[RMDB]
RNA sequence: GGGAACGACUCGAGUAGAGUCGAAAAGAGCUAGCAGCGCCAGGGGACUUGUCGCACCUGAGCGCGCUGGCGAAUUCCCCGCAGUCACCCGGCCCCCGAGCCCUCGGUUUUGUCCAAACUGGAACACUUUCACGUAGGAAUUCGUUCCUACGUGAAAAAAAGAAACAACAACAACAAC
Reactivity to 2A3 in 0.01 (KOAc 150mM, MgCl2 10mM, bicine 150mM(pH8.5), 24C), signal-to-noise 4, nucleotides 027 to 126: g080a010g000c000u010a000g000c220a020g010c010g010c000c000a010g050g010g010g030a090c040u110u180g100u200c110g040c070a090c050c000u020g020a030g010c010g010c010g000c000u000g000g010c000g000a000a000u010u000c010c000c000c010g030c040a010g050u040c020a040c020c010c000g020g010c000c010c000c010c000g020a020g010c020c010c000u020c000g020g020u020u020u090u130g040u000c020c020a030a050a060c070u110g030g000a080a030c040a010c050
Reactivity to DMS in 0.01 (KOAc 150mM, MgCl2 10mM, bicine 150mM(pH8.5), 24C), signal-to-noise 4, nucleotides 027 to 126: g000a300g010c000u010a010g030c000a090g040c000g010c010c010a020g000g000g000g000a070c070u030u030g030u010c140g000c110a120c000c000u000g000a110g000c000g030c000g010c000u000g000g010c000g000a100a080u010u000c020c000c000c200g000c060a070g010u010c030a070c050c020c040g020g000c020c010c020c020c020g000a140g010c030c000c010u000c040g000g000u000u010u010u000g010u010c030c040a050a050a060c100u010g000g010a080a090c130a110c140
Notes
Chemical mapping of a 177-nucleotide RNA with 2A3 and DMS. 2A3 adducts were read by reverse transcription with SuperScript II with manganese. The 2A3 profile rests on 3,651 reads. Conditions: 150 mM KOAc, 10 mM MgCl2 and 150 mM bicine (pH 8.5), 24 C. The data come from the RNA Mapping Database (RMDB), libraries RFM100 and RFMREP.